[RMDB]
RNA sequence: GGGAACGACUCGAGUAGAGUCGAAAAGAUAUGGAGAGGGUACCGAAUCGAACUAUCGGAAACGAUAGUCCGAUAUAGACAGUACCUACCCACCUCCUAAGUCAAAAGCUUUGCUUCGGCAAAGCAAGGAUAUGAAUAUCUUCGGAUAUUCAUAUCCAAAAGAAACAACAACAACAAC
Reactivity to DMS in 0.01 (KOAc 150mM, MgCl2 10mM, bicine 150mM(pH8.5), 24C), signal-to-noise 6, nucleotides 027 to 126: g010a050u000a050u000g000g000a020g010a300g010g010g000u000a000c010c010g000a030a020u000c000g010a020a010c010u000a000u000c000g010g000a020a010a060c010g010a020u000a010g000u000c000c010g030a000u000a190u000a080g000a050c300a150g010u000a000c010c010u000a100c160c120c070a220c200c000u000c000c000u000a020a150g000u000c030a050a050a120a130g010c000u000u000u000g000c000u000u010c220g020g000c000a010a000a010g000c010a020a030
Reactivity to 2A3 in 0.01 (KOAc 150mM, MgCl2 10mM, bicine 150mM(pH8.5), 24C), signal-to-noise 4, nucleotides 027 to 126: g010a010u050a020u080g020g000a020g040a060g040g000g010u010a010c010c020g030a020a020u000c000g000a010a000c000u000a010u000c010g000g000a020a010a010c000g000a010u000a010g000u000c010c000g000a000u020a010u060a030g020a000c000a010g000u010a010c000c000u050a080c070c030c020a240c050c000u000c000c010u020a030a010g030u020c030a080a060a090a110g000c010u010u000u010g010c000u040u110c300g150g000c000a000a000a020g000c010a000a020